The record gives the reactivity of an RNA of 177 nucleotides to DMS and 2A3. The data come from the RNA Mapping Database (RMDB), library OK2TST.
[RMDB]
RNA sequence: GGGAACGACUCGAGUAGAGUCGAAAAGGGUCGCCAGGUGCGAGCUUCUUCAUCUGGCAUGGUAACGAAGCUGGCGAUGAUGACAAUAUCGCCGACACUGGCGCAGUGGGCCGCCGCACCGUUAACAACUGAGGUGAUGAUUCGUCAUCACCUCAGUAAAAGAAACAACAACAACAAC
Reactivity to DMS in 0.01 (KOAc 150mM, MgCl2 10mM, bicine 150mM(pH8.5), 24C), signal-to-noise 2, nucleotides 027 to 126: g000g020g010u000c010g010c010c000a060g030g000u000g000c130g000a100g010c040u000u020c010u010u020c190a030u000c020u010g000g010c160a090u000g010g030u010a030a100c180g000a040a050g020c030u010g050g000c010g010a020u010g000a140u010g000a090c300a100a160u000a040u000c000g020c000c020g010a090c070a050c100u010g000g000c040g010c090a090g000u000g010g020g000c030c030g000c020c030g010c020a030c050c030g020u000u000a040a110c130a110
Reactivity to 2A3 in 0.01 (KOAc 150mM, MgCl2 10mM, bicine 150mM(pH8.5), 24C), signal-to-noise 1, nucleotides 027 to 126: g070g030g010u140c010g020c010c000a000g060g000u040g060c070g040a080g000c060u060u040c020u110u070c020a030u000c000u110g060g080c030a040u100g000g010u060a060a020c070g000a040a020g020c030u070g040g000c000g000a020u040g080a050u080g080a010c080a080a010u050a000u250c000g000c000c000g050a010c010a000c030u080g000g000c030g020c040a020g020u110g000g030g030c060c020g020c000c000g000c000a070c030c010g020u020u040a070a030c060a050
Conditions: 150 mM KOAc, 10 mM MgCl2 and 150 mM bicine (pH 8.5), 24 C.